[RMDB]
RNA sequence: GGGAACGACUCGAGUAGAGUCGAAAAAUUACAGACGCAGCUUCCUUGGCGGCGAGGAUGGCAGGACGACUGGUCGACGAACAGCAAAGUGGAAAAAAUUGCAAAUUUGAGUUUUGUGUUUUGUGGCUGGUCGUAAGGCCAAAGUGAAGGACAACCACGCAUUUAUUUAGUUCGCUAAAUAAAUGCGAAAAGAAACAACAACAACAAC
Reactivity to 2A3 in 0.01 (KOAc 150mM, MgCl2 10mM, bicine 150mM(pH8.5), 24C), signal-to-noise 3, nucleotides 027 to 156: a000u170u160a080c060a040g090a000c030g000c030a020g000c030u030u020c020c000u080u090g040g000c020g000g000c010g030a020g070g020a050u080g010g000c040a020g060g050a000c000g000a000c010u010g030g010u000c040g160a050c010g010a010a000c020a030g140c000a000a000a020g050u140g100g000a090a080a000a010a030a030u220u300g060c090a050a140a150u070u060u090g050a050g030u020u030u050u010g020u010g030u030u030u080u220g010u020g030g000c020u010g010g010u000c000g000u000a000a030g040g000c000c000a030a070a000g090u080g050a030a020g030g010a030c060a050a040c040c030a010
Reactivity to DMS in 0.01 (KOAc 150mM, MgCl2 10mM, bicine 150mM(pH8.5), 24C), signal-to-noise 2, nucleotides 027 to 156: a100u000u000a110c040a110g010a060c030g050c040a130g000c020u000u000c020c060u000u010g020g010c020g010g070c060g020a100g030g020a130u000g020g000c040a150g020g010a060c020g000a060c020u000g030g030u010c000g010a060c040g000a030a060c000a100g030c000a040a070a090g030u000g010g000a010a070a070a050a110a100u000u000g000c120a110a100a160u000u000u000g030a300g000u000u000u000u000g010u010g000u000u000u010u010g050u010g010g000c020u010g020g000u000c010g030u000a010a090g010g000c000c010a040a080a080g000u020g020a110a100g000g010a110c010a060a100c000c020a160